Source information: This 177-nucleotide RNA was probed chemically with DMS and 2A3. For 2A3 the reverse transcriptase was SuperScript II with manganese. The reactions ran in a buffer of 150 mM KOAc, 10 mM MgCl2 and 150 mM bicine (pH 8.5), at 24 C. The 2A3 profile rests on 950 reads. DMS adducts were read by reverse transcription with MarathonRT. Values are in units of 0.01, from 0 to 300, in steps of 10.
[RMDB]
RNA sequence: GGGAACGACUCGAGUAGAGUCGAAAACUGCGGGAGGGGUAUGGGACUUGACCGUCUGGGUCGCACGUUGUGCGGAUCAAGUGAGUAGGUUGGUGGCUAAUUGCGGUAUCAUCCCCAAACCUAUUAGCAUAAGACACCGUUUCGACGGUGUCUUAUGAAAAGAAACAACAACAACAAC
Reactivity to DMS in 0.01 (KOAc 150mM, MgCl2 10mM, bicine 150mM(pH8.5), 24C), signal-to-noise 2, nucleotides 027 to 126: c140u010g040c050g010g000g000a170g030g010g000g010u010a030u020g020g000g000a100c030u000u000g000a040c030c060g010u010c080u000g010g000g010u000c050g000c040a060c070g040u010u000g010u020g010c000g010g010a070u000c050a050a040g010u000g010a080g000u000a020g000g000u000u010g000g000u010g010g000c120u010a030a100u000u000g030c100g030g000u010a070u020c120a090u000c010c000c000c060a030a030a060c090c050u000a060u000u010a080g000
Reactivity to 2A3 in 0.01 (KOAc 150mM, MgCl2 10mM, bicine 150mM(pH8.5), 24C), signal-to-noise 1, nucleotides 027 to 126: c020u040g000c060g080g000g000a120g000g010g000g000u120a070u070g020g020g030a040c020u120u110g010a010c010c000g050u060c080u030g020g010g040u020c020g020c040a040c110g300u220u300g010u000g000c000g010g000a050u040c010a110a040g030u080g070a020g040u090a020g050g020u060u040g030g070u030g040g000c000u020a150a080u110u080g080c050g070g010u020a030u080c040a050u080c020c000c000c050a140a040a030c040c010u110a150u150u120a120g020